Background
This 177-nucleotide RNA was probed chemically with 2A3. Values cover nucleotides 27 to 126. The RNA was probed in 150 mM KOAc, 10 mM MgCl2 and 150 mM bicine (pH 8.5) at 24 C. The 2A3 profile rests on 610 reads.
[RMDB]
RNA sequence: GGGAACGACUCGAGUAGAGUCGAAAAGGUAGACAAACACUUAAUUGCUUAAGGUCACUCGUUAUCGCAAGUUCGACUAUAUCACUGACAUUGAAAAACAACGACUCAUAAAAUAUAUUUUGCAAAAGCCAGUAGCGUUAUUCGUAACGCUACUGGCAAAAGAAACAACAACAACAAC
Reactivity to 2A3 in 0.01 (KOAc 150mM, MgCl2 10mM, bicine 150mM(pH8.5), 24C), signal-to-noise 2, nucleotides 027 to 126: g100g000u070a050g000a150c050a060a210a000c000a070c030u030u210a110a090u290u020g030c070u060u020a030a010g000g000u020c000a000c080u030c050g030u060u000a070u030c000g000c110a210a070g000u070u040c020g030a040c070u150a090u020a000u240c080a060c000u000g090a020c040a090u000u050g040a000a040a000a130a000c010a000a000c000g090a020c010u000c110a000u130a170a030a110a000u150a000u050a050u040u210u010u050g000c010a010a020a020a020